[RMDB]
RNA sequence: GGGAACGACUCGAGUAGAGUCGAAAACAUAUUGCAGAUCCGAGGUGAACGCUAUGUUUUAACUAUCUAACACGGAGUUGGAGUGAUUUAAAGAUCGCUUUGACGAGCCAACAAUGGAAGAGCCAACACGCAAGCUAAACUUCGGUUUAGCUUGCGUAAAAGAAACAACAACAACAAC
Reactivity to DMS in 0.01 (KOAc 150mM, MgCl2 10mM, bicine 150mM(pH8.5), 24C), signal-to-noise 2, nucleotides 027 to 126: c010a020u010a060u010u000g000c010a040g000a080u000c010c070g000a170g010g000u010g000a120a140c080g000c000u000a000u000g000u000u000u000u050a030a080c060u030a050u010c040u030a120a210c210a140c130g020g060a140g000u010u000g000g010a040g010u000g010a000u000u020u060a080a140a160g020a020u000c000g000c000u010u010u000g000a040c040g000a110g090c040c040a030a060c190a110a060u040g020g000a010a010g040a030g010c050c060a080a060c140
Reactivity to 2A3 in 0.01 (KOAc 150mM, MgCl2 10mM, bicine 150mM(pH8.5), 24C), signal-to-noise 2, nucleotides 027 to 126: c020a020u020a080u070u270g010c040a050g060a090u000c000c050g190a120g170g000u140g020a050a000c030g000c000u000a040u050g000u000u080u040u000a020a010c040u050a060u220c130u060a160a000c030a000c120g010g000a190g010u000u000g030g000a030g010u010g000a130u010u000u250a080a090a030g040a010u000c000g040c040u090u080u000g000a000c000g000a050g020c000c000a030a030c000a060a130u110g060g020a060a020g070a000g140c000c000a080a000c010